[RMDB]
RNA sequence: GGGAACGACUCGAGUAGAGUCGAAAAUCUUUCUCCGCAAUGCCUAUGUGUACACUUCACAAGGGUUUGUGGUGGUCAAUGGCAAAGUUUCUACACUUGUCAAACAAGUGUUAGACUUGCUUAAUAAGGACUCAGCGCUUCGGCGCUGAGAAAAGAAACAACAACAACAAC
Reactivity to 2A3 in 0.01 (KOAc 150mM, MgCl2 10mM, bicine 150mM(pH8.5), 24C), signal-to-noise 3, nucleotides 027 to 129: u000c000u000u050u000c010u000c010c030g040c000a050a020u230g150c000c000u150a250u130g010u000g010u070a090c030a110c150u150u080c030a000c010a000a070g010g000g000u000u000u030g000u000g000g050u020g020g000u050c050a010a230u070g060g000c000a000a000a080g080u100u070u020c030u020a010c010a000c000u050u030g040u080c040a070a160a020c000a020a010g000u010g000u030u030a010g000a000c020u000u010g010c010u010u040a050a080u130a090a020g130g000a030
Reactivity to DMS in 0.01 (KOAc 150mM, MgCl2 10mM, bicine 150mM(pH8.5), 24C), signal-to-noise 2, nucleotides 027 to 129: u050c030u010u010u010c000u050c090c000g000c030a000a000u020g140c030c010u000a300u050g110u000g030u070a170c000a220c160u020u030c010a020c090a130a300g000g000g040u030u000u010g040u000g000g030u030g010g040u020c080a040a100u000g000g050c050a030a010a020g000u020u100u000c070u020a040c010a050c020u010u080g030u000c140a130a020a260c000a060a000g000u030g010u030u050a030g040a050c000u020u020g050c010u000u000a100a060u060a110a100g010g100a100
Chemical mapping of a 170-nucleotide RNA with 2A3 and DMS. In probing experiments dimethyl sulfate is read out at A N1 and C N3, which are open when not base-paired. The data come from the RNA Mapping Database (RMDB), library 15KLIB. 2A3 adducts were read by reverse transcription with SuperScript II with manganese.